[RMDB]
RNA sequence: GGGAACGACUCGAGUAGAGUCGAAAACGCUGCUGCCCAGAGAUGGGCUGUGGCACCAGGUUAACGACCUCGGGUAUGGUAACAACGCCUGAGAUUGGACAAUCCGCAGCCAAGCUCCCUCAUGGGAAGAAGGUUCAGAGACUAGAUGGUUGUGGGUCACCUUAUGAGACUUCGGUCUCAUAAGGUGAAAAGAAACAACAACAACAAC
Reactivity to 2A3 in 0.01 (KOAc 150mM, MgCl2 10mM, bicine 150mM(pH8.5), 24C), signal-to-noise 2, nucleotides 027 to 156: c060g030c000u000g000c030u010g000c000c000c000a010g000a010g010a110u050g000g000g050c000u000g000u010g020g010c000a010c020c000a010g040g100u140u060a210a010c030g050a030c020c030u000c000g070g000g000u130a190u300g120g030u090a170a000c050a040a050c120g000c000c030u060g000a010g000a020u040u080g060g000a010c010a040a020u000c000c090g000c020a020g010c000c000a040a000g100c000u020c000c000c040u070c150a200u160g050g070g010a000a080g070a090a040g110g050u130u150c100a040g080a010g030a120c080u080a110g020a140u070g000g000u020u020g000u020g050g000g000u000
An RNA of 207 nucleotides, treated with 2A3 and read out base by base.